Notes:
Structure probing data (2A3 and DMS) for a 177-nucleotide construct. It was measured as part of the RMDB library TTRDEL. The reactions ran in a buffer of 150 mM KOAc, 10 mM MgCl2 and 150 mM bicine (pH 8.5), at 24 C. Values are in units of 0.01, from 0 to 300, in steps of 10. For 2A3, 3,223 sequencing reads were counted. DMS adducts were read by reverse transcription with MarathonRT.
RNA sequence: GGGAACGACUCGAGUAGAGUCGAAAAGAUAUGGACGCAGGUACCAGCAACAGCUCGGAAACGAGACAUGCUGAGUACUGCGUCCUAAGUCAAAAGAUCGCCGUCUACUUCGGUAGACGGCGAUCAAGAGAGUGUUUAACUUCGGUUAAACACUCUCAAAAGAAACAACAACAACAAC
Reactivity to 2A3 in 0.01 (KOAc 150mM, MgCl2 10mM, bicine 150mM(pH8.5), 24C), signal-to-noise 2, nucleotides 027 to 126: g020a010u050a020u180g000g000a000c000g000c020a030g240g190u100a020c000c010a000g020c010a020a090c040a220g050c000u010c000g020g020a110a070a030c000g010a000g040a040c020a080u100g000c000u000g040a080g090u010a010c000u000g000c010g000u000c010c000u000a010a000g020u000c000a000a000a080a150g000a020u000c010g040c040c000g030u050c020u000a000c040u040u080c260g090g000u010a000g000a010c010g020g030c000g000a000u000c000a000a000
Reactivity to DMS in 0.01 (KOAc 150mM, MgCl2 10mM, bicine 150mM(pH8.5), 24C), signal-to-noise 2, nucleotides 027 to 126: g000a050u000a300u000g000g000a010c000g030c000a010g000g020u010a020c020c010a020g020c010a020a060c240a230g000c010u000c010g010g000a080a070a210c000g000a020g010a030c100a200u000g000c000u000g000a110g000u000a050c000u010g000c000g010u000c000c000u010a010a090g000u000c040a170a110a110a130g000a020u000c020g020c000c000g000u000c000u010a010c000u000u000c150g030g000u000a020g000a000c010g000g000c000g000a000u000c010a030a070